[RMDB]
RNA sequence: GGGAACGACUCGAGUAGAGUCGAAAAAGGAUAGGAUUCGUCCUAUCCUACACCAAAACCUCCUGGCGGUGCGGCGCCGGCCCCGCCGGGAACGCCGCCUUAUUGGUAGCUGGUUCGCCAGCUACAACACUACAGUACUCUUCGGAGUACUGUAGUGAAAAGAAACAACAACAACAAC
Reactivity to DMS in 0.01 (KOAc 150mM, MgCl2 10mM, bicine 150mM(pH8.5), 24C), signal-to-noise 4, nucleotides 027 to 126: a020g010g010a020u010a010g000g000a020u000u010c180g010u000c000c000u000a000u000c000c000u000a020c130a140c040c050a100a070a100a240c080c090u000c040c040u010g010g000c000g010g010u000g010c060g010g020c070g020c020c030g010g020c030c090c300c080g030c000c010g020g000g000a040a110c040g010c030c010g000c020c060u000u000a070u000u000g020g010u000a000g000c000u000g000g000u000u000c140g020c010c010a010g010c000u010a000c010a060a180
Reactivity to 2A3 in 0.01 (KOAc 150mM, MgCl2 10mM, bicine 150mM(pH8.5), 24C), signal-to-noise 1, nucleotides 027 to 126: a010g000g000a000u000a000g000g010a000u030u070c190g050u040c060c000u000a000u000c000c000u000a010c020a030c000c020a040a040a060a080c010c020u050c000c030u040g020g010c020g010g020u040g020c040g070g030c090g110c070c030g010g030c060c060c020c060g000c000c000g000g020g000a010a000c020g030c030c000g090c030c020u140u170a150u050u180g100g000u000a000g000c000u010g000g060u030u030c210g040c060c000a000g000c000u010a000c000a010a010
Chemical mapping of a 177-nucleotide RNA with DMS and 2A3. Reactivities are given for positions 27 through 126. Conditions: 150 mM KOAc, 10 mM MgCl2 and 150 mM bicine (pH 8.5), 24 C. For DMS the reverse transcriptase was MarathonRT. Reactivities are rounded to 0.1 and cut off at 0 and 3. It was measured as part of the RMDB library M2PK50.